This 177-nucleotide RNA was probed chemically with 2A3 and DMS. Reactivities are given for positions 27 through 126. It was measured as part of the RMDB library OK1LIB. 2A3 adducts were read by reverse transcription with SuperScript II with manganese. DMS adducts were read by reverse transcription with MarathonRT. The RNA was probed in 150 mM KOAc, 10 mM MgCl2 and 150 mM bicine (pH 8.5) at 24 C.
[RMDB]
RNA sequence: GGGAACGACUCGAGUAGAGUCGAAAAACAGUGGAUGGAACUGCGCUCGUGCUGAGUCCCCCGCUGGAUAUGUUACGAGCAAGGCUAGUGGUGUGCUUCGCUUCGUGGACAACGAUCGGUGCCGUAGACUAUAGGAGUAGUUCGCUACUCCUAUAGUAAAAGAAACAACAACAACAAC
Reactivity to 2A3 in 0.01 (KOAc 150mM, MgCl2 10mM, bicine 150mM(pH8.5), 24C), signal-to-noise 9, nucleotides 027 to 126: a010c050a030g030u060g050g060a150u100g040g030a060a030c020u050g010c030g010c040u060c060g100u130g020c020u050g030a090g080u020c010c000c000c000c020g020c120u090g000g020a030u050a040u150g040u020u090a020c020g010a010g020c030a060a020g050g000c030u090a050g080u060g140g070u100g040u070g060c010u030u040c030g020c020u060u060c030g030u040g040g020a040c030a070a030c090g040a050u050c030g020g020u030g030c030c010g030u040a030g040
Reactivity to DMS in 0.01 (KOAc 150mM, MgCl2 10mM, bicine 150mM(pH8.5), 24C), signal-to-noise 9, nucleotides 027 to 126: a090c050a040g010u000g000g010a070u020g010g010a060a060c040u010g000c100g010c080u010c130g020u020g000c030u010g010a140g000u010c010c010c070c030c040g010c040u000g000g010a060u020a050u020g010u000u010a030c010g000a030g000c020a070a060g000g000c030u010a070g020u010g010g020u010g000u010g010c010u000u010c110g000c030u000u020c040g010u010g000g010a050c060a080a120c110g000a050u020c040g000g000u000g000c030c030g000u020a070g000